An RNA of 177 nucleotides, treated with 2A3 and DMS and read out base by base. The reactions ran in a buffer of 150 mM KOAc, 10 mM MgCl2 and 150 mM bicine (pH 8.5), at 24 C.

RNA sequence: GGGAACGACUCGAGUAGAGUCGAAAAAUUGAAUACAGGAAUUUGAAUUAAAGGCUGCAUUCAUGAGACCAGGCUCUGAACCCUGUGGGGACGGCCUGGCUGCAUCUGUCACCUUGAGAAACAAGUGCUUGUAACUAGGGUUCGCCCUAGUUACAAGAAAAGAAACAACAACAACAAC
Reactivity to 2A3 in 0.01 (KOAc 150mM, MgCl2 10mM, bicine 150mM(pH8.5), 24C), signal-to-noise 2, nucleotides 027 to 126: a000u070u040g010a010a040u080a040c030a100g100g140a120a110u140u050u080g050a030a020u180u180a180a020a060g070g040c040u010g000c040a010u010u130c040a020u020g040a000g000a060c000c000a000g000g000c010u000c040u300g060a080a090c000c000c000u140g080u300g130g000g000g050a020c020g010g000c000c010u000g010g000c000u000g020c000a020u000c020u020g080u070c010a050c000c000u020u040g100a120g090a100a080a000c020a070a000g060u070g110
Reactivity to DMS in 0.01 (KOAc 150mM, MgCl2 10mM, bicine 150mM(pH8.5), 24C), signal-to-noise 3, nucleotides 027 to 126: a090u000u010g000a050a030u000a080c050a040g000g010a130a100u000u010u010g010a140a160u000u010a090a060a020g010g000c070u000g020c020a010u000u000c070a030u010g010a090g000a110c010c000a020g000g010c010u000c060u000g030a230a190c020c000c090u010g040u020g040g010g000g010a210c190g000g010c020c000u000g010g000c010u010g000c070a030u000c110u000g010u010c100a040c020c010u000u000g010a130g000a090a060a160c070a020a030g000u000g010